RNA sequence: GGGAACGACUCGAGUAGAGUCGAAAAGAAACUCGUUUCGCGUUGGCUGCCUAAUUCAAGGAAUUAGCGUGCCUUCAUGCUAAGGGUUUGAGAUCUGCUAAAACCCGGUGCAUUCAUCAAUGCAGGUCUCAUCCAAAUGCCUUCGGGCAUUUGGAAAUUCCUUAAGAAUAUUCGUAUUCUUAAGGAAAAAAGAAACAACAACAACAAC
Reactivity to DMS in 0.01 (KOAc 150mM, MgCl2 10mM, bicine 150mM(pH8.5), 24C), signal-to-noise 2, nucleotides 027 to 156: g000a130a060a050c020u000c040g040u000u000u020c090g010c060g040u000u000g020g020c010u000g030c110c000u000a030a020u000u000c000a150a160g000g010a070a040u000u000a000g020c020g050u000g010c020c030u010u000c020a100u000g010c040u000a130a160g000g000g000u000u010u000g020a040g000a020u000c030u030g000c020u010a090a050a060a190c020c010c040g030g020u000g020c030a090u000u000c020a030u010c030a110a280u000g020c010a010g020g020u000c020u000c020a150u000c000c000a000a040a010u000g020c000c000u000u010c300g070g000g000c000a000u000u000u030g000g000a010a050a070
Reactivity to 2A3 in 0.01 (KOAc 150mM, MgCl2 10mM, bicine 150mM(pH8.5), 24C), signal-to-noise 2, nucleotides 027 to 156: g050a000a030a020c020u000c040g070u010u090u080c110g020c010g030u010u000g010g040c050u130g070c050c010u020a010a010u020u020c110a170a080g180g040a060a010u010u000a000g020c060g040u050g000c000c000u000u010c060a050u120g000c010u040a000a040g000g010g000u010u070u110g000a000g000a000u000c000u000g020c030u070a020a020a160a300c000c000c020g020g010u070g030c080a090u090u300c000a020u110c040a090a130u130g020c000a000g010g000u020c000u000c000a000u000c000c000a000a000a010u000g000c010c000u030u060c140g060g020g040c000a000u000u020u010g000g000a000a040a000